RNA sequence: GGGAACGACUCGAGUAGAGUCGAAAAAGAUAUGGAUGUGUAGAUCGCAUAGCGUAUUGUCAGCAUAUCUCCUCGGAAACGAGGAGUAAGUGCUUGGAUUUAUACGCUCCGUACACAUCCUAAGUCAUCAUUUUCUAUGCUUCGGCAUAGAAAAUGAAAAAGAAACAACAACAACAAC
Reactivity to 2A3 in 0.01 (KOAc 150mM, MgCl2 10mM, bicine 150mM(pH8.5), 24C), signal-to-noise 2, nucleotides 027 to 126: a000g010a040u040a030u200g000g010a010u000g000u010g010u030a020g060a300u290c140g000c210a160u300a130g000c000g000u010a000u010u020g020u020c000a000g030c010a000u040a070u000c000u000c000c010u010c020g000g000a160a100a070c010g040a000g020g010a010g000u000a080a020g030u000g000c040u050u140g220g000a030u270u300u120a040u020a000c030g010c000u000c020c010g040u000a000c000a010c010a020u010c000c000u020a060a000g050u040c020a030
Reactivity to DMS in 0.01 (KOAc 150mM, MgCl2 10mM, bicine 150mM(pH8.5), 24C), signal-to-noise 2, nucleotides 027 to 126: a060g020a050u000a300u000g000g000a000u000g000u010g000u000a000g020a170u000c180g060c300a110u010a130g010c060g000u000a000u000u000g030u000c000a040g040c000a050u000a300u000c000u000c000c000u030c000g020g000a150a070a190c010g010a010g000g000a020g000u010a000a240g000u000g000c010u000u000g050g010a030u000u010u000a000u000a010c000g020c010u010c210c070g000u000a010c000a000c000a040u000c000c010u000a030a100g000u000c030a220